Source: RMDB library OK2TRN, as collected in RNAgym. The record gives the reactivity of an RNA of 177 nucleotides to 2A3 and DMS. The reactions ran in a buffer of 150 mM KOAc, 10 mM MgCl2 and 150 mM bicine (pH 8.5), at 24 C. The DMS profile rests on 2,681 reads.

[RMDB]
RNA sequence: GGGAACGACUCGAGUAGAGUCGAAAACGCGUCAUGGCGAAGGCGGUCUGACGUCAUGCGAGGAAUCGACAAGCGCGCGAACGAACUUCUCGACAAGGGCGACCGCGCCGGGUACGCGGCGAUGCUCGACCGUAUACUCCUUCGGGAGUAUACGGUCAAAAGAAACAACAACAACAAC
Reactivity to 2A3 in 0.01 (KOAc 150mM, MgCl2 10mM, bicine 150mM(pH8.5), 24C), signal-to-noise 4, nucleotides 027 to 126: c020g010c000g020u050c010a040u060g020g020c040g090a120a060g200g020c040g040g070u040c050u110g080a070c040g080u040c020a020u020g030c000g010a000g030g070a030a050u040c010g050a040c070a140a050g060c020g010c040g000c020g100a070a020c010g010a030a060c060u040u030c020u030c040g130a140c060a100a090g030g000g000c000g010a040c020c010g000c010g000c000c000g040g000g030u150a020c030g000c020g020g000c050g040a050u150g030c030u040c070
Reactivity to DMS in 0.01 (KOAc 150mM, MgCl2 10mM, bicine 150mM(pH8.5), 24C), signal-to-noise 3, nucleotides 027 to 126: c010g010c020g010u000c020a160u030g010g010c040g000a150a170g010g010c070g020g010u010c050u000g020a300c070g020u000c030a050u000g020c050g020a050g020g020a050a120u000c000g020a100c150a100a160g000c060g010c050g030c030g000a070a140c060g000a040a110c100u000u000c020u000c070g010a090c110a040a170g010g000g010c030g000a080c020c000g000c010g010c020c020g000g020g020u000a060c010g000c010g000g000c080g000a090u000g000c010u000c100
The 2A3 profile rests on 5,430 reads.